This 207-nucleotide RNA was probed chemically with 2A3.
2A3 is a SHAPE reagent: it acylates the 2'-hydroxyl of flexible nucleotides of all four kinds.
The RNA was probed in 150 mM KOAc, 10 mM MgCl2 and 150 mM bicine (pH 8.5) at 24 C.
[RMDB]
RNA sequence: GGGAACGACUCGAGUAGAGUCGAAAAGGAACCAAAAAGCCUGAGUAGUCAAGGCAAUCCUAAACAAAAAGAACAAAGGUGGAGGCAUCACAUUACCUAACUUCAAACUACAGGGCUACCAUGACCAAAACAGCAUGGUACUGGUACAAAAGCAGAACGGUAGCAUGGUGUUCGCACCAUGCUACCGAAAAGAAACAACAACAACAAC
Reactivity to 2A3 in 0.01 (KOAc 150mM, MgCl2 10mM, bicine 150mM(pH8.5), 24C), signal-to-noise 1, nucleotides 027 to 156: g030g000a000a030c080c000a070a000a000a000a030g000c000c000u020g080a070g010u100a000g000u120c060a100a070g000g000c030a000a160u070c020c000u050a000a030a080c040a040a080a000a000a020g030a060a090c130a140a100a110g110g010u090g040g040a000g070g000c010a010u000c000a020c000a040u000u210a030c000c030u000a050a150c020u060u080c060a120a030a000c000u020a060c020a030g000g020g000c000u020a000c010c010a010u080g130a260c000c030a050a180a000a070c050a020g020c000a010u030g000g000u020a140c010u020g000g000u050a030c060a000a040a000a000g120c110a090g150a140a030